Record summary
This 177-nucleotide RNA was probed chemically with DMS and 2A3. For DMS the reverse transcriptase was MarathonRT. For 2A3 the reverse transcriptase was SuperScript II with manganese. The reactions ran in a buffer of 150 mM KOAc, 10 mM MgCl2 and 150 mM bicine (pH 8.5), at 24 C. The 2A3 profile rests on 4,004 reads.
[RMDB]
RNA sequence: GGGAACGACUCGAGUAGAGUCGAAAAGAAGAGCAGUCAGAUAAUCUUGUGCAGUAUGAAUGCUCGUAACUCCAUCGCACAAGUAGAUGUAGAUAACUUUAAUCUCGCAUAGCGGAGGAGCCGCAGAACCUCCUCCACUAUUCGUAGUGGAGGAGGUAAAAGAAACAACAACAACAAC
Reactivity to DMS in 0.01 (KOAc 150mM, MgCl2 10mM, bicine 150mM(pH8.5), 24C), signal-to-noise 3, nucleotides 027 to 126: g000a130a110g010a020g000c040a030g000u000c030a070g010a160u030a060a050u020c030u000u000g000u000g000c050a220g040u000a040u010g010a050a050u000g000c000u000c080g020u060a080a030c100u000c060c000a050u010c070g050c000a010c070a020a020g030u020a060g010a080u030g000u020a000g000a080u010a050a090c160u000u020u010a090a050u010c010u010c010g000c130a090u020a070g020c000g010g010a110g000g000a090g020c060c000g020c090a110g000a110
Reactivity to 2A3 in 0.01 (KOAc 150mM, MgCl2 10mM, bicine 150mM(pH8.5), 24C), signal-to-noise 4, nucleotides 027 to 126: g120a070a000g000a000g000c010a010g060u030c020a020g040a190u130a130a140u130c030u010u020g010u060g000c040a040g030u150a060u050g040a110a000u020g010c010u020c040g050u010a030a020c020u000c040c030a070u080c010g000c000a000c000a010a040g000u010a020g040a100u100g040u090a020g030a050u080a150a000c010u100u120u080a070a030u030c030u000c020g000c110a100u060a140g010c010g030g030a050g050g010a010g050c020c010g000c010a010g060a040